[RMDB]
RNA sequence: GGGAACGACUCGAGUAGAGUCGAAAAUAACUGGCUGGAUGUGGUUGAGUCGUCUGGCGUCGUACAGAUGUUUGCGAACAUGACGGUUGCCUACAACACAAGCGCGGCUGUCUCGCGGCUAAGAGCAUAGUGAGCAAAAUUUCGAUUUUGCUCACUAAAAAGAAACAACAACAACAAC
Reactivity to DMS in 0.01 (KOAc 150mM, MgCl2 10mM, bicine 150mM(pH8.5), 24C), signal-to-noise 4, nucleotides 027 to 126: u010a090a140c060u000g000g010c010u000g020g000a090u000g010u000g010g020u000u010g010a090g010u010c040g010u000c050u010g000g010c080g010u000c050g000u000a090c120a120g000a100u000g000u000u000u010g040c030g000a040a080c060a060u000g010a030c030g010g010u000u010g020c020c020u010a040c130a050a060c140a060c200a060a060g010c100g040c050g010g000c040u000g000u010c030u000c040g010c040g010g020c040u010a070a100g010a110g030c100a140
Reactivity to 2A3 in 0.01 (KOAc 150mM, MgCl2 10mM, bicine 150mM(pH8.5), 24C), signal-to-noise 3, nucleotides 027 to 126: u140a030a050c030u020g040g010c010u000g060g020a080u020g070u050g130g000u070u110g090a060g070u100c020g000u000c080u020g080g020c040g050u050c040g020u060a060c040a060g150a120u040g140u000u090u160g100c040g010a050a060c020a090u120g040a000c010g050g000u040u070g020c000c010u040a070c040a200a030c020a020c040a090a090g030c080g010c000g100g000c010u050g040u070c030u010c050g000c020g000g060c020u060a100a050g020a010g080c020a030
Chemical mapping of a 177-nucleotide RNA with DMS and 2A3. For 2A3, 2,275 sequencing reads were counted. For DMS, 4,182 sequencing reads were counted. The RNA was probed in 150 mM KOAc, 10 mM MgCl2 and 150 mM bicine (pH 8.5) at 24 C. DMS adducts were read by reverse transcription with MarathonRT.